[RMDB]
RNA sequence: GGGAACGACUCGAGUAGAGUCGAAAAGGCGAACAGGGCCACCGGCCCGGUCUGGCGCUCCAGGGCCGCCAGGACGCACGCGUACAGCGCCCGCCACAGAGUCGGGUUCUCCAGGGGCUCCAGCGGGCCCCGUUAUAUGUUUCGACAUAUAACGGGGAAAAGAAACAACAACAACAAC
Reactivity to 2A3 in 0.01 (KOAc 150mM, MgCl2 10mM, bicine 150mM(pH8.5), 24C), signal-to-noise 7, nucleotides 027 to 126: g050g000c030g020a100a050c120a170g040g040g040c030c040a060c080c100g030g010c000c000c000g000g020u020c010u000g000g010c010g000c000u010c020c020a090g020g010g010c040c040g000c020c010a050g060g040a010c020g030c030a040c070g060c010g020u090a080c040a070g020c020g010c030c030c000g020c010c010a120c030a050g050a020g040u100c030g010g050g000u100u060c050u030c030c020a040g060g000g020g000c000u010c010c010a010g010c020g020g020g000
Reactivity to DMS in 0.01 (KOAc 150mM, MgCl2 10mM, bicine 150mM(pH8.5), 24C), signal-to-noise 6, nucleotides 027 to 126: g000g000c010g010a120a100c090a090g000g000g000c020c020a100c160c110g000g020c000c010c000g010g010u020c010u010g000g020c060g000c040u000c030c100a140g000g010g010c100c060g000c020c020a080g000g000a060c030g000c060a090c110g010c040g000u020a070c090a120g010c060g000c000c010c000g000c040c050a120c200a120g000a050g010u010c010g000g000g010u010u010c030u030c030c070a120g000g000g000g010c010u000c020c080a100g000c040g000g000g000